[RMDB]
RNA sequence: GGGAACGACUCGAGUAGAGUCGAAAAGAAAGAAGUUAUCGAGUUCUACAGCAAAAACAAAGAACUGAUGGACAACAUGCGCAAUGUUGCUCUGGAAGAACAGGCUGUUGAAGCUGUACUGGCGAAACUCCCGGAUAAUAUUCGUAUUAUCCGGGAGAAAAGAAACAACAACAACAAC
Reactivity to 2A3 in 0.01 (KOAc 150mM, MgCl2 10mM, bicine 150mM(pH8.5), 24C), signal-to-noise 3, nucleotides 027 to 126: g060a010a120a010g050a090a010g020u090u090a140u190c020g020a030g050u070u040c030u040a010c000a020g010c000a010a070a130a000a050c050a030a140a040g020a050a030c010u020g010a020u090g000g000a000c000a000a010c000a020u050g000c140g020c210a060a040u010g000u000u010g000c070u020c010u030g020g020a070a030g030a070a020c020a030g150g000c010u000g030u030u020g020a070a020g000c000u000g000u030a030c020u070g070g050c030g030a030a030a060
Reactivity to DMS in 0.01 (KOAc 150mM, MgCl2 10mM, bicine 150mM(pH8.5), 24C), signal-to-noise 5, nucleotides 027 to 126: g000a100a080a140g020a090a100g000u000u000a090u000c020g010a090g020u020u010c100u000a020c020a020g020c010a020a100a140a030a030c050a050a170a150g000a040a180c010u000g000a300u010g000g000a030c010a020a020c010a010u000g000c300g010c160a110a010u000g000u000u000g000c180u000c000u010g000g000a180a050g000a040a230c050a070g000g020c110u000g030u000u000g000a200a150g000c010u000g000u000a020c120u010g000g000c020g010a050a070a110